This 177-nucleotide RNA was probed chemically with DMS and 2A3.
The RNA was probed in 150 mM KOAc, 10 mM MgCl2 and 150 mM bicine (pH 8.5) at 24 C.
RNA sequence: GGGAACGACUCGAGUAGAGUCGAAAAAACUGCAGUACUUGUGGGGAAGGCACAAGUAGGACACCAACAUUACCUGCAAGCAAGACGCAAAAUUAAUAGAACAUCACCAUACUUGUGGCUUUCUUGCUUUCUCUUAGCAUUUCGAUGCUAAGAGAAAAAAAGAAACAACAACAACAAC
Reactivity to DMS in 0.01 (KOAc 150mM, MgCl2 10mM, bicine 150mM(pH8.5), 24C), signal-to-noise 4, nucleotides 027 to 126: a020a050c070u010g000c080a070g000u000a030c030u010u000g020u000g000g020g000g000a120a060g020g010c010a010c020a020a010g020u000a020g000g010a200c080a150c060c030a040a080c110a100u000u000a110c040c000u020g000c020a050a080g000c100a050a040g000a050c090g000c010a030a020a060a070u000u020a060a070u000a070g000a090a060c120a120u010c110a120c050c040a090u010a060c110u000u000g010u010g010g010c090u000u010u000c010u000u000g010c200
Reactivity to 2A3 in 0.01 (KOAc 150mM, MgCl2 10mM, bicine 150mM(pH8.5), 24C), signal-to-noise 8, nucleotides 027 to 126: a000a000c110u110g000c040a040g030u060a040c020u040u030g000u010g020g050g020g020a040a030g080g000c000a000c000a020a000g000u010a010g040g050a010c020a040c070c020a030a070c020a080u050u140a080c000c000u020g010c010a020a010g030c010a040a030g050a070c040g010c040a050a090a050a060u170u140a090a120u110a080g070a070a020c030a080u090c030a010c070c020a050u090a140c040u020u040g010u020g050g030c020u000u010u000c010u010u020g010c000